[RMDB]
RNA sequence: GGGAACGACUCGAGUAGAGUCGAAAAAGGUGAUUUCUCCUGCACCUUUAUCAAUGGAGGAACUCGACUUUGCUGUGGGUCCCAAAAGGACCUUAGGUGCAGACAGUUACCGGCGGUGAAGUGUGAGCAUAGGUUCGUGUCUUCGGACACGAACCAACAGGUAGUGUAACUUCGGUUACACUACCUGAAAAGAAACAACAACAACAAC
Reactivity to DMS in 0.01 (KOAc 150mM, MgCl2 10mM, bicine 150mM(pH8.5), 24C), signal-to-noise 1, nucleotides 027 to 156: a040g040g020u020g010a270u000u000u000c030u000c010c010u000g000c030a060c000c030u000u000u080a130u000c240a050a110u000g000g010a070g000g000a120a110c040u000c030g000a050c020u000u000u010g010c000u000g060u010g010g000g000u000c010c010c030a030a130a130a290g030g000a020c010c000u010u010a050g050g000u000g000c060a160g010a220c140a090g000u000u010a030c000c000g000g020c070g020g050u000g010a000a120g000u000g000u000g010a050g060c030a080u010a130g050g000u000u000c010g020u020g010u010c000u000u000c270g010g010a030c000a000c000g000a000a010c000c000a010a130
Reactivity to 2A3 in 0.01 (KOAc 150mM, MgCl2 10mM, bicine 150mM(pH8.5), 24C), signal-to-noise 3, nucleotides 027 to 156: a000g010g000u020g000a040u050u020u010c000u010c010c010u100g070c020a010c000c020u110u230u150a050u030c030a020a060u300g040g000a010g010g020a050a050c010u010c010g010a020c000u000u020u020g000c000u030g000u100g040g000g000u000c030c010c000a050a060a000a020g000g000a000c000c010u020u110a030g000g000u010g000c010a020g120a300c020a050g030u080u100a030c010c010g020g000c010g030g020u020g010a010a030g030u080g070u120g060a020g050c040a100u120a130g000g000u000u000c000g010u000g000u000c000u010u040c180g070g000a000c000a000c000g000a000a000c010c000a000a010
This 207-nucleotide RNA was probed chemically with DMS and 2A3. The RNA was probed in 150 mM KOAc, 10 mM MgCl2 and 150 mM bicine (pH 8.5) at 24 C. For 2A3, 2,490 sequencing reads were counted. Values cover nucleotides 27 to 156. For DMS, 1,948 sequencing reads were counted.